[RMDB]
RNA sequence: GGGAACGACUCGAGUAGAGUCGAAAAGAAUGAGAAUUGGCCAGUAAUUCUUUGGUAUCAAAAACUGUCUAUUAGCAAACAGUUGACAACAUGAUUGGACUAAUAGCCGCUCACAUUCCAUGGGAAAGAGGAGAGGUAAAUUCGUUUACCUCUCCUCAAAAGAAACAACAACAACAAC
Reactivity to DMS in 0.01 (KOAc 150mM, MgCl2 10mM, bicine 150mM(pH8.5), 24C), signal-to-noise 4, nucleotides 027 to 126: g010a080a060u000g010a060g020a100a120u000u010g010g010c020c060a070g000u000a090a040u000u000c050u000u000u000g000g030u010a110u010c080a040a050a060a080a100c050u000g010u000c030u010a120u000u000a090g000c140a090a070a100c020a020g010u010u000g010a110c160a060a070c080a040u010g000a080u000u000g010g000a080c030u000a030a070u000a030g010c030c060g010c050u000c050a020c050a090u000u000c010c010a100u000g020g010g010a080a070a130
Reactivity to 2A3 in 0.01 (KOAc 150mM, MgCl2 10mM, bicine 150mM(pH8.5), 24C), signal-to-noise 3, nucleotides 027 to 126: g000a010a060u090g000a010g070a070a140u150u120g040g000c050c020a040g040u060a040a150u120u000c000u050u040u040g010g020u130a090u190c020a020a050a030a040a090c030u050g040u000c010u050a110u090u060a090g070c080a060a090a060c010a020g030u030u030g120a080c080a110a000c030a110u150g010a100u030u060g040g010a030c010u020a010a060u020a080g010c030c010g000c000u000c000a000c010a030u060u000c030c020a050u110g080g000g070a030a120a080